RNA sequence: GGGAACGACUCGAGUAGAGUCGAAAAGAUAUGGAAGACGCACUCCCGAGGAUCAACGUAACAUCUCGGAAACGAGUGGUUGGGAGGGAAACGUCUUCCUAAGUCAAAAGCCACCUUCGGGUGGCAAGAUAUUGACAUCCUUCGGGAUGUCAAUAUCAAAAGAAACAACAACAACAAC
Reactivity to 2A3 in 0.01 (KOAc 150mM, MgCl2 10mM, bicine 150mM(pH8.5), 24C), signal-to-noise 2, nucleotides 027 to 126: g000a020u000a010u080g000g000a010a000g020a000c020g030c070a090c250u040c000c010c010g020a300g000g030a010u030c000a010a020c010g070u120a050a080c060a290u190c020u000c030g000g020a020a030a000c010g000a010g020u090g060g000u060u010g000g000g010a000g000g000g000a020a070a000c000g000u000c010u000u000c010c000u000a010a000g000u000c010a000a000a120a130g000c000c000a010c000c000u030u090c290g170g000g000u000g010g030c010a000a010
Reactivity to DMS in 0.01 (KOAc 150mM, MgCl2 10mM, bicine 150mM(pH8.5), 24C), signal-to-noise 4, nucleotides 027 to 126: g010a020u000a180u010g000g000a010a010g010a020c000g030c120a140c250u000c000c000c000g010a080g000g000a030u010c020a010a010c000g040u010a120a160c190a050u010c000u000c000g000g010a030a050a070c000g010a010g020u000g010g000u000u000g000g010g000a020g020g020g000a040a030a100c010g020u010c000u010u000c000c010u000a010a060g010u010c010a110a090a100a150g000c000c000a010c000c010u000u030c180g000g010g020u000g000g000c010a000a010